[RMDB]
RNA sequence: GGGAACGACUCGAGUAGAGUCGAAAAAACCCCAAAUAUAAUGCGCGCAUUGCAUAUGAGUAGAUUAGUGACUGCACAAAACUUGUAUCACGAUGAGCUUGAGACCACCUUAAGGCUAUAUAAGCCACACGCAUACUGGUUUCGACCAGUAUGCGUGAAAAGAAACAACAACAACAAC
Reactivity to DMS in 0.01 (KOAc 150mM, MgCl2 10mM, bicine 150mM(pH8.5), 24C), signal-to-noise 1, nucleotides 027 to 126: a110a020c270c000c030c090a090a000a070u010a040u000a010a050u010g020c030g010c130g000c060a150u000u080g010c070a120u050a150u000g000a050g070u000a000g030a090u000u000a070g030u000g000a130c100u000g010c030a020c120a030a030a020a100c120u000u000g000u000a020u000c100a050c070g000a050u000g000a110g000c070u000u010g000a150g000a100c010c020a010c060c030u000u000a030a170g010g010c000u030a120u000a100u010a070a070g020c000c030a130
Reactivity to 2A3 in 0.01 (KOAc 150mM, MgCl2 10mM, bicine 150mM(pH8.5), 24C), signal-to-noise 1, nucleotides 027 to 126: a000a000c110c010c000c000a020a060a020u280a020u050a060a050u070g010c050g000c020g000c050a020u070u190g040c000a010u100a070u100g030a060g050u060a030g020a150u120u180a000g030u040g080a090c100u220g000c130a000c020a030a050a060a040c000u000u040g000u040a040u060c030a000c130g120a110u030g000a020g040c000u040u050g050a040g000a090c000c060a020c000c010u070u100a070a040g000g000c010u030a040u000a030u010a280a030g030c010c000a000
Source: RMDB library OK2TST, as collected in RNAgym. Chemical mapping of a 177-nucleotide RNA with DMS and 2A3. Values cover nucleotides 27 to 126. The reactions ran in a buffer of 150 mM KOAc, 10 mM MgCl2 and 150 mM bicine (pH 8.5), at 24 C.